The data come from the RNA Mapping Database (RMDB), library OK2TST. An RNA of 177 nucleotides, treated with DMS and 2A3 and read out base by base. 2A3 adducts were read by reverse transcription with SuperScript II with manganese. The reactions ran in a buffer of 150 mM KOAc, 10 mM MgCl2 and 150 mM bicine (pH 8.5), at 24 C. Values are in units of 0.01, from 0 to 300, in steps of 10.
RNA sequence: GGGAACGACUCGAGUAGAGUCGAAAAAGGGAAGUACUUCAACGGAGUUGUUUACCACCAUUGAAGGCAACUACGCUGAUGCUGUGCGCCUGCUGACGACUGCUCAUAGCGUACCGUUUGACGGUAAGGAUUGAUACGAGUUCGCUCGUAUCAAUCCAAAAGAAACAACAACAACAAC
Reactivity to DMS in 0.01 (KOAc 150mM, MgCl2 10mM, bicine 150mM(pH8.5), 24C), signal-to-noise 3, nucleotides 027 to 126: a090g010g000g000a110a020g030u000a060c030u000u000c010a020a050c040g000g020a100g000u010u000g010u000u000u010a130c110c070a110c130c150a140u000u000g030a100a080g000g000c020a020a050c040u000a030c100g020c030u000g010a030u010g000c060u010g010u010g010c110g000c010c010u000g010c270u000g000a110c030g000a080c010u000g010c020u000c050a100u000a090g010c090g020u000a050c020c010g020u010u010u000g020a060c060g010g000u000a070a130
Reactivity to 2A3 in 0.01 (KOAc 150mM, MgCl2 10mM, bicine 150mM(pH8.5), 24C), signal-to-noise 3, nucleotides 027 to 126: a000g100g000g010a100a010g000u090a050c030u050u040c000a000a010c060g010g000a050g010u040u070g050u050u130u060a100c040c060a020c030c030a050u030u140g080a080a030g000g010c000a030a030c020u010a030c050g000c040u040g000a040u060g060c060u040g010u040g040c030g100c020c010u050g010c040u010g020a020c020g050a080c010u040g020c000u000c030a090u080a040g040c010g000u000a030c000c010g010u080u130u190g140a060c030g040g000u040a060a080